[RMDB]
RNA sequence: GGGAACGACUCGAGUAGAGUCGAAAAGUAUGGGCGUUCGCGCCCAUACAAAACGUUCAUCCUACGGGACGGAAGUAGGAUUUAUGCUGAAGGAAGGCAUCAAAACGGGCCGCUUCGGCGGCCCGAACGAGACUAUAAAGUUCGCUUUAUAGUCUCGAAAAGAAACAACAACAACAAC
Reactivity to 2A3 in 0.01 (KOAc 150mM, MgCl2 10mM, bicine 150mM(pH8.5), 24C), signal-to-noise 2, nucleotides 027 to 126: g010u000a000u020g000g010g020c040g010u080u110c210g030c000g030c090c000c020a010u010a000c000a000a000a000a010c010g040u060u050c020a020u020c010c010u000a000c010g040g060g140a040c070g020g120a090a070g020u030a010g000g010a020u000u010u040a050u050g010c010u050g060a120a030g060g050a060a080g070g000c010a020u040c070a080a110a010a080c010g000g010g030c060c000g050c020u080u050c210g040g020c110g000g040c010c000c000g000a010a000
Reactivity to DMS in 0.01 (KOAc 150mM, MgCl2 10mM, bicine 150mM(pH8.5), 24C), signal-to-noise 2, nucleotides 027 to 126: g010u000a000u020g020g000g010c000g040u010u000c230g050c010g040c000c000c020a000u000a000c020a010a040a060a140c140g000u000u010c080a090u000c000c000u000a010c030g000g010g000a060c110g000g020a120a140g000u010a040g000g000a070u000u010u000a050u010g000c010u000g010a140a140g020g010a110a180g010g010c000a050u000c260a020a060a070a120c040g050g030g080c040c000g020c050u010u000c160g020g070c060g070g110c000c000c010g000a000a050
The data come from the RNA Mapping Database (RMDB), library M2PK50. This 177-nucleotide RNA was probed chemically with 2A3 and DMS. Values cover nucleotides 27 to 126. The 2A3 profile rests on 2,382 reads.